[RMDB]
Source: RMDB library OK3TST, as collected in RNAgym. This 207-nucleotide RNA was probed chemically with 2A3 and DMS. The DMS profile rests on 3,758 reads. Values are in units of 0.01, from 0 to 300, in steps of 10.
RNA sequence: GGGAACGACUCGAGUAGAGUCGAAAAACAUUGACAAGCAGUACGUGGGCUUCGCCACACUGCCCAACCAGGUGCACCGCAAGUCGGUGAAGAAAGGCUUUGACUUCACACUCAUGGUGGCUGGUGAGUCAGGCCUGGGGAAGUCCACACUGGUCCACGAUAGCAUUAGGUUCGCCUAAUGCUAUCGAAAAGAAACAACAACAACAAC
Reactivity to 2A3 in 0.01 (KOAc 150mM, MgCl2 10mM, bicine 150mM(pH8.5), 24C), signal-to-noise 5, nucleotides 027 to 156: a010c070a100u120u170g040a030c060a100a050g060c020a030g030u160a080c130g000u020g000g010g000c000u040u030c090g180c160c010a030c020a020c010u010g000c000c020c000a060a050c000c010a030g060g090u180g170c000a000c000c010g010c050a060a050g070u170c110g110g000u040g000a030a040g050a040a110a030g140g040c090u260u190u160g070a050c000u030u030c030a020c010a010c010u070c050a070u180g030g010u010g030g040c010u020g010g020u010g020a020g010u020c000a000g000g070c010c020u020g000g000g010g000a000a000g000u000c030c010a000c000a000c000u000g010g010u040c020c010a030
Reactivity to DMS in 0.01 (KOAc 150mM, MgCl2 10mM, bicine 150mM(pH8.5), 24C), signal-to-noise 1, nucleotides 027 to 156: a160c040a120u010u010g010a140c090a130a140g040c010a040g020u000a050c140g050u000g010g020g000c030u000u000c070g000c000c020a050c050a070c040u050g000c020c010c100a150a110c030c030a050g010g040u000g030c020a050c040c010g040c040a110a040g040u010c020g050g020u000g020a020a040g000a100a150a080g040g000c060u000u000u000g010a120c010u000u000c010a060c030a060c000u010c060a150u000g020g020u000g000g010c000u000g000g000u000g040a070g000u000c030a060g010g030c030c080u000g000g000g040g020a080a040g030u000c000c000a020c000a050c000u000g000g000u010c060c020a170
For 2A3 the reverse transcriptase was SuperScript II with manganese. The 2A3 profile rests on 6,951 reads. The RNA was probed in 150 mM KOAc, 10 mM MgCl2 and 150 mM bicine (pH 8.5) at 24 C. High DMS reactivity at an A or C suggests that its Watson-Crick edge is free.